An RNA of 177 nucleotides, treated with 2A3 and DMS and read out base by base. The RNA was probed in 150 mM KOAc, 10 mM MgCl2 and 150 mM bicine (pH 8.5) at 24 C.
[RMDB]
RNA sequence: GGGAACGACUCGAGUAGAGUCGAAAAAGAAUCUCCUUCGGGAGAUUCUGAACCACUAAGCUGAUUGCGGAUGUCGACGAGGCAGCUCGUGUCGAGCAACCACCGAGAACAGGUUCGCCUGUUCUAACUCUCUCAACAGUUUCGACUGUUGAGAGAGAAAAGAAACAACAACAACAAC
Reactivity to 2A3 in 0.01 (KOAc 150mM, MgCl2 10mM, bicine 150mM(pH8.5), 24C), signal-to-noise 3, nucleotides 027 to 126: a010g000a010a000u000c000u010c010c010u010u070c130g090g000g000a000g000a000u000u000c000u000g000a000a020c010c010a030c100u100a110a040g040c010u030g110a120u110u270g070c030g010g060a040u060g060u080c010g010a070c060g030a090g020g070c040a030g020c040u020c030g030u050g040u030c040g050a020g010c010a010a050c010c030a040c050c080g140a030g010a040a010c000a010g010g050u020u040c170g050c040c000u010g000u000u000c000u000a000a010
Reactivity to DMS in 0.01 (KOAc 150mM, MgCl2 10mM, bicine 150mM(pH8.5), 24C), signal-to-noise 3, nucleotides 027 to 126: a000g000a010a010u000c000u000c000c000u000u000c170g020g020g000a030g010a000u000u010c000u000g000a070a210c040c010a090c230u020a100a100g010c060u000g010a050u000u000g030c020g000g000a130u010g000u000c030g000a080c060g010a140g010g010c170a120g030c030u000c010g000u000g020u000c030g010a110g010c050a060a110c040c040a060c130c130g030a020g010a020a020c010a010g010g020u000u010c240g010c000c010u000g000u000u000c000u000a080a120